[RMDB]
RNA sequence: GGGAACGACUCGAGUAGAGUCGAAAAUAUACAUCAGAAGUCGGCACAACUCCCGACUCGCGGUGAGCGAUGCAGCGUAGCCGCCGCUACGCAGCUGCUGUGCGGAUGGCUAGCAAAAGCUAGCCUAAUCACCUGCAUGCUUCGGCAUGCAGGUGAUAAAAGAAACAACAACAACAAC
Reactivity to DMS in 0.01 (KOAc 150mM, MgCl2 10mM, bicine 150mM(pH8.5), 24C), signal-to-noise 1, nucleotides 027 to 126: u040a020u020a100c040a060u010c000a090g040a120a050g000u000c000g000g000c130a180c060a050a180c220u080c050c000c000g030a040c060u010c050g040c300g000g010u020g000a100g000c110g020a000u040g010c000a040g000c000g040u000a010g000c010c070g020c170c220g000c030u000a010c000g000c000a030g040c020u000g020c020u000g000u000g040c110g000g030a050u000g000g000c020u010a030g020c000a050a010a090a130g000c000u040a000g000c000c030u000a040
Reactivity to 2A3 in 0.01 (KOAc 150mM, MgCl2 10mM, bicine 150mM(pH8.5), 24C), signal-to-noise 2, nucleotides 027 to 126: u090a000u040a010c050a080u070c010a010g100a270a020g130u000c000g040g050c150a010c050a300a300c130u070c020c000c000g050a040c050u000c000g000c000g040g010u140g010a050g000c040g050a070u130g080c030a040g000c030g020u030a000g000c020c010g000c000c030g040c040u000a000c040g030c020a070g000c000u060g000c010u000g040u050g040c000g030g070a020u040g030g000c030u010a000g000c000a000a090a270a000g000c000u000a020g000c020c000u000a070
The record gives the reactivity of an RNA of 177 nucleotides to DMS and 2A3.
In probing experiments dimethyl sulfate is read out at A N1 and C N3, which are open when not base-paired.
It was measured as part of the RMDB library OK1LIB.
For 2A3, 1,058 sequencing reads were counted.
For DMS, 1,681 sequencing reads were counted.
Values cover nucleotides 27 to 126.
The reactions ran in a buffer of 150 mM KOAc, 10 mM MgCl2 and 150 mM bicine (pH 8.5), at 24 C.